[RMDB]
RNA sequence: GGGAACGACUCGAGUAGAGUCGAAAAGUGCUCUCAAUGACCGAUUGUCUGGCCGCUGAGACACAUAGGGAUUGUGAUUUUAAUAAACCACUCAUUGAGUGGCCACUUACUGAGUAUGAUUUUACUGCAACCACAAUCAGUUCGCUGAUUGUGGUUGAAAAGAAACAACAACAACAAC
Reactivity to DMS in 0.01 (KOAc 150mM, MgCl2 10mM, bicine 150mM(pH8.5), 24C), signal-to-noise 2, nucleotides 027 to 126: g040u000g000c200u000c020u000c010a010a050u010g040a060c000c010g000a120u020u020g000u010c070u030g040g010c030c030g060c080u000g010a040g000a050c000a000c040a120u010a110g000g010g010a070u000u000g030u000g000a120u000u000u000u020a040a120u000a050a100a190c000c020a010c000u020c000a160u020u010g010a010g030u010g000g050c060c050a080c180u010u000a100c140u000g010a050g010u000a060u020g000a100u040u000u000u000a040c050u000g020
Reactivity to 2A3 in 0.01 (KOAc 150mM, MgCl2 10mM, bicine 150mM(pH8.5), 24C), signal-to-noise 1, nucleotides 027 to 126: g010u000g010c040u010c000u010c000a020a020u050g020a020c030c000g060a140u060u200g130u040c010u130g020g080c010c010g000c010u010g020a030g030a010c010a020c030a050u150a100g070g000g100a110u000u060g050u050g050a050u010u070u020u160a130a100u160a040a080a000c010c000a030c010u000c000a140u070u130g000a000g000u060g010g040c050c010a010c030u110u120a020c020u040g010a000g080u010a050u150g250a300u190u050u070u100a060c010u030g050